[RMDB]
Description: Source: RMDB libraries RFM100 and RFMREP, as collected in RNAgym. Chemical mapping of a 177-nucleotide RNA with DMS and 2A3. DMS adducts were read by reverse transcription with MarathonRT. Values cover nucleotides 27 to 126. The RNA was probed in 150 mM KOAc, 10 mM MgCl2 and 150 mM bicine (pH 8.5) at 24 C. Reactivities are rounded to 0.1 and cut off at 0 and 3.
RNA sequence: GGGAACGACUCGAGUAGAGUCGAAAAGGGAUAAUACCGGAUGGAUCACUAGUGCUGGAAUGCUUGGUGGUCGAAAGGCAACGCCUUUGGAUGGGUCUGCGGCGGAUUAGGUUGACGCCGGUGUAACCAAUGCGCAUAGUUUCGACUAUGCGCAUUGAAAAGAAACAACAACAACAAC
Reactivity to DMS in 0.01 (KOAc 150mM, MgCl2 10mM, bicine 150mM(pH8.5), 24C), signal-to-noise 7, nucleotides 027 to 126: g000g000g000a110u010a090a090u010a080c030c020g000g020a200u020g000g000a020u000c020a020c020u000a020g020u030g020c010u000g020g040a130a090u010g000c020u010u000g000g020u000g000g000u000c010g010a050a110a060g000g000c040a120a150c190g010c010c010u000u020u000g000g010a110u010g010g000g000u000c060u000g000c050g000g000c020g000g000a100u030u020a090g000g010u000u010g000a160c060g010c010c010g000g010u020g010u020a100a100c190
Reactivity to 2A3 in 0.01 (KOAc 150mM, MgCl2 10mM, bicine 150mM(pH8.5), 24C), signal-to-noise 5, nucleotides 027 to 126: g070g030g020a040u060a150a030u040a200c020c020g020g000a050u130g110g010a010u020c010a010c010u030a040g090u040g190c000u040g110g150a160a060u150g020c000u020u020g000g000u000g000g020u000c030g030a010a010a000g020g000c040a120a100c120g040c000c000u020u050u040g070g030a140u080g010g020g010u010c050u090g020c040g030g010c000g000g020a030u060u210a060g160g000u030u050g020a040c040g010c020c000g000g020u050g020u010a040a020c040